This 177-nucleotide RNA was probed chemically with DMS and 2A3.
The RNA was probed in 150 mM KOAc, 10 mM MgCl2 and 150 mM bicine (pH 8.5) at 24 C.
The DMS profile rests on 8,512 reads.
It was measured as part of the RMDB library OK1LIB.
RNA sequence: GGGAACGACUCGAGUAGAGUCGAAAAUCACUUACACCGAGUACGUGGACGCGAAUGAGGUAAUAUCAGUUUUCGCGAAUUUGUCGCUUCUACCCGGCACCUCAGCUAGUGAGAGUGGCUAUUAUGCACUAAAGAGCGAGUUCGCUCGCUCUUUAGUAAAAGAAACAACAACAACAAC
Reactivity to DMS in 0.01 (KOAc 150mM, MgCl2 10mM, bicine 150mM(pH8.5), 24C), signal-to-noise 4, nucleotides 027 to 126: u040c030a020c070u000u000a080c050a110c090c050g000a100g010u010a050c060g040u000g020g010a140c030g000c030g010a040a050u010g020a090g030g010u010a060a100u030a160u010c040a130g000u020u000u000u000c010g020c020g000a080a100u020u000u020g030u000c030g010c030u010u000c040u010a100c040c040c030g020g000c060a120c080c030u000c090a090g020c050u000a060g010u010g000a100g000a060g030u010g000g000c040u010a040u010u020a040u040g040c130
Reactivity to 2A3 in 0.01 (KOAc 150mM, MgCl2 10mM, bicine 150mM(pH8.5), 24C), signal-to-noise 7, nucleotides 027 to 126: u080c000a000c030u040u050a020c010a020c050c080g020a020g040u070a060c070g020u030g050g040a030c030g000c000g030a030a090u080g030a050g090g040u180a150a050u150a150u220c060a090g070u050u020u120u060c010g000c020g010a040a060u140u060u070g060u010c020g000c030u080u000c000u070a130c010c030c000g030g000c040a050c010c000u020c020a020g050c050u100a030g070u060g080a050g010a030g040u040g020g000c010u010a070u220u080a090u300g070c040